[RMDB]
RNA sequence: GGGAACGACUCGAGUAGAGUCGAAAAGAAAGUUCAAGCAAGCUAGCCGGCAAAAAAGCAAACUUGACCACCAAGGAUAAAAGAGAUCUUAUCCAAGGAUGCAUAAGAUAAUCUCACUUUUGACACCAAAACAGGGAGUAGUUCGCUACUCCCUGAACAUAUAGGCAUCGUUCGCGAUGCCUAUAUGAAAAGAAACAACAACAACAAC
Reactivity to DMS in 0.01 (KOAc 150mM, MgCl2 10mM, bicine 150mM(pH8.5), 24C), signal-to-noise 2, nucleotides 027 to 156: g000a100a030a060g000u020u010c050a090a060g010c010a080a160g010c040u000a300g030c000c040g020g010c010a010a030a100a060a150a070g020c000a060a100a050c020u010u010g000a140c060c020a100c080c010a050a240g000g020a110u000a020a010a060a040g000a120g000a120u000c080u000u000a030u000c010c010a070a210g010g010a110u020g020c070a130u000a070a020g000a080u000a040a220u000c030u000c040a110c070u000u010u000u010g000a240c040a050c040c040a060a040a060a190c010a000g000g000g000a000g010u010a000g020u000u000c250g010c010u000a010c000u000c010c000c010u000g000a000a040
Reactivity to 2A3 in 0.01 (KOAc 150mM, MgCl2 10mM, bicine 150mM(pH8.5), 24C), signal-to-noise 3, nucleotides 027 to 156: g050a020a090a000g020u060u020c050a020a010g020c000a090a020g030c060u070a030g040c060c040g080g000c090a080a090a090a040a010a010g020c020a080a050a000c010u030u020g010a030c020c000a020c000c040a070a010g030g000a030u050a070a060a000a030g070a010g000a000u040c000u000u000a010u020c020c020a040a050g090g020a080u080g000c020a030u030a080a040g010a060u080a080a040u030c010u020c020a030c040u040u030u040u100g080a090c100a110c120c100a050a030a070a140c020a000g020g000g000a000g000u000a010g000u010u040c200g010c140u000a000c000u030c010c000c000u000g000a000a000